[RMDB]
RNA sequence: GGGAACGACUCGAGUAGAGUCGAAAAGAUUUACGGCGGGAAACGUCCCGGGUGCGCGCUGAGGUCCCGGGUGCGGCACCGACCGAAAGGCGCUGAAACGGCACCGACCGAAACCGCCGGAAAGAAACCUAUAUCAGUCCUUCGGGACUGAUAUAGGAAAAGAAACAACAACAACAAC
Reactivity to DMS in 0.01 (KOAc 150mM, MgCl2 10mM, bicine 150mM(pH8.5), 24C), signal-to-noise 2, nucleotides 027 to 126: g000a140u000u000u000a050c000g020g000c000g000g000g000a060a050a250c220g020u010c020c080c050g010g000g010u010g030c040g040c020g020c060u000g000a150g010g010u000c060c130c030g020g010g010u000g040c040g000g000c070a120c020c030g000a080c030c030g000a040a140a200g000g010c020g010c040u000g000a110a110a160c110g010g010c080a040c050c050g000a110c010c010g000a120a110a140c050c000g000c010c000g010g000a020a030a090g010a150a110a130
Reactivity to 2A3 in 0.01 (KOAc 150mM, MgCl2 10mM, bicine 150mM(pH8.5), 24C), signal-to-noise 1, nucleotides 027 to 126: g000a010u170u150u170a010c010g000g000c010g030g010g000a040a130a060c010g010u000c090c040c030g030g030g020u060g050c090g010c040g000c070u040g090a020g110g100u060c070c150c030g050g040g000u070g040c060g010g000c010a030c010c020g010a010c000c000g060a090a050a000g060g000c000g030c020u120g020a190a110a020c060g010g020c030a010c140c000g040a070c000c010g050a130a050a000c010c010g000c000c030g000g020a000a010a000g070a110a040a010
Description:
Chemical mapping of a 177-nucleotide RNA with DMS and 2A3. For 2A3, 982 sequencing reads were counted. For DMS the reverse transcriptase was MarathonRT. For 2A3 the reverse transcriptase was SuperScript II with manganese. The reactions ran in a buffer of 150 mM KOAc, 10 mM MgCl2 and 150 mM bicine (pH 8.5), at 24 C. It was measured as part of the RMDB library OK2TRN.